[RMDB]
RNA sequence: GGGAACGACUCGAGUAGAGUCGAAAAACUGGAACAGGAAUCGUGAAUCACAAAGAAGCAAAUGGAUGGUUCGUAGGUUAUGUUGAAACGAAAGAUAAUACGUAUUAUUUUGCUACACAUUUAAAAGCACCAGUAGACUUUUCGAAGUCUACUGGUGAAAAGAAACAACAACAACAAC
Reactivity to DMS in 0.01 (KOAc 150mM, MgCl2 10mM, bicine 150mM(pH8.5), 24C), signal-to-noise 4, nucleotides 027 to 126: a100c030u020g000g020a090a050c070a070g010g000a070a030u040c050g000u020g030a080a070u000c040a130c120a070a070a090g000a140a080g000c130a040a060a060u040g020g000a160u000g000g000u000u020c020g000u030a110g000g000u040u020a020u000g000u020u010g010a060a070a070c130g000a070a030a050g000a040u020a010a030u020a090c220g020u010a050u010u000a050u010u020u000u000g000c070u040a060c120a110c180a090u000u000u010a040a120a150a040g000
Reactivity to 2A3 in 0.01 (KOAc 150mM, MgCl2 10mM, bicine 150mM(pH8.5), 24C), signal-to-noise 4, nucleotides 027 to 126: a000c080u110g030g030a060a050c030a090g090g120a040a000u020c020g130u110g060a010a020u000c010a000c030a150a230a030g070a060a010g090c040a090a100a060u090g030g080a100u020g020g010u070u020c040g050u130a050g020g030u020u080a040u090g050u070u040g090a120a120a010c110g020a020a100a080g100a020u120a110a010u070a120c080g050u030a030u060u030a030u020u140u140u060g080c040u130a060c070a010c030a090u090u230u290a070a130a010a000g050

This 177-nucleotide RNA was probed chemically with DMS and 2A3. For DMS the reverse transcriptase was MarathonRT. Conditions: 150 mM KOAc, 10 mM MgCl2 and 150 mM bicine (pH 8.5), 24 C. 2A3 adducts were read by reverse transcription with SuperScript II with manganese. It was measured as part of the RMDB library OK1LIB.